[RMDB]
RNA sequence: GGGAACGACUCGAGUAGAGUCGAAAAGAUAUGGAAAGGCGGCUGAUGACCUCACAGUGGGUCGGAAACGACCCAUCACAGGCAAGGCCCUCUUUCCUAAGUCAAAACAUUCGGUUCGCCGAAUGAAGGUAUAUCGAUGCUUCGGCAUCGAUAUACCAAAAGAAACAACAACAACAAC
Reactivity to 2A3 in 0.01 (KOAc 150mM, MgCl2 10mM, bicine 150mM(pH8.5), 24C), signal-to-noise 1, nucleotides 027 to 126: g020a020u020a010u140g040g010a000a000a000g000g060c050g010g000c000u040g000a140u300g110a250c000c030u040c010a090c070a030g020u030g000g000g020u000c000g000g040a050a040a020c010g020a020c000c000c000a010u040c030a020c000a000g030g040c000a010a040g000g000c000c020c010u050c000u000u010u020c000c000u010a080a000g050u030c040a000a020a090a180c010a010u020u020c000g000g050u040u100c300g070c100c000g010a000a000u030g030a080a060
Reactivity to DMS in 0.01 (KOAc 150mM, MgCl2 10mM, bicine 150mM(pH8.5), 24C), signal-to-noise 1, nucleotides 027 to 126: g000a070u000a300u040g000g000a020a010a020g000g000c300g000g010c000u000g060a200u000g000a300c000c000u000c020a080c220a130g000u000g000g000g000u010c000g000g010a120a040a250c010g000a000c000c000c000a010u000c000a140c300a030g000g010c010a190a300g020g000c000c000c020u010c040u000u000u000c010c000u000a000a100g030u000c060a100a060a180a080c000a020u000u000c000g040g020u000u000c130g060c000c000g000a010a000u000g000a120a060